RNA sequence: GGGAACGACUCGAGUAGAGUCGAAAAUACUUAGUACGCGCGUAGUUGCAGGCAUUCCGGGUACAGCAACUGACGCGGAAGACUUUUCCCAGAGUGUGCGCUUCAACUGGCGUGCUGAGUAGUGCACGAAUUGCACGUACGUUCGCGUACGUGCAAAAGGGUAUCAUGUAUUCGUACAUGAUACCCUAAAAGAAACAACAACAACAAC
Reactivity to DMS in 0.01 (KOAc 150mM, MgCl2 10mM, bicine 150mM(pH8.5), 24C), signal-to-noise 2, nucleotides 027 to 156: u000a040c050u000u000a070g030u000a090c020g050c000g000c050g050u030a030g020u000u000g000c000a120g040g020c040a070u010u000c050c120g050g050g090u010a050c020a160g000c010a020a060c030u000g000a080c050g030c020g000g010a050a080g000a110c090u020u000u010u000c010c000c000a160g010a110g030u010g000u000g030c040g000c030u000u010c080a110a100c070u000g020g030c040g020u000g000c020u000g000a080g000u000a050g010u020g000c030a080c030g000a050a230u000u000g010c010a030c000g010u000a010c000g020u000u000c300g000c010g010u000a000c000g040u000g020c010a000a010a070
Reactivity to 2A3 in 0.01 (KOAc 150mM, MgCl2 10mM, bicine 150mM(pH8.5), 24C), signal-to-noise 4, nucleotides 027 to 156: u090a010c000u000u010a010g000u000a010c000g010c010g010c030g100u040a000g000u010u000g030c040a060g060g000c040a130u150u110c060c080g100g030g000u230a220c070a030g000c020a050a030c030u120g120a040c050g000c050g020g010a010a000g100a100c030u070u100u040u030c000c000c000a010g000a020g000u110g000u010g000c060g000c040u040u030c030a210a220c090u030g040g000c010g000u010g000c010u000g000a000g000u040a020g000u050g020c030a010c030g050a070a100u040u020g000c000a000c000g000u000a000c000g020u020u040c090g030c000g090u000a000c000g010u000g000c000a000a000a000
Background:
The record gives the reactivity of an RNA of 207 nucleotides to DMS and 2A3. DMS adducts were read by reverse transcription with MarathonRT. The DMS profile rests on 5,021 reads. Reactivities are rounded to 0.1 and cut off at 0 and 3. The RNA was probed in 150 mM KOAc, 10 mM MgCl2 and 150 mM bicine (pH 8.5) at 24 C. The 2A3 profile rests on 3,218 reads.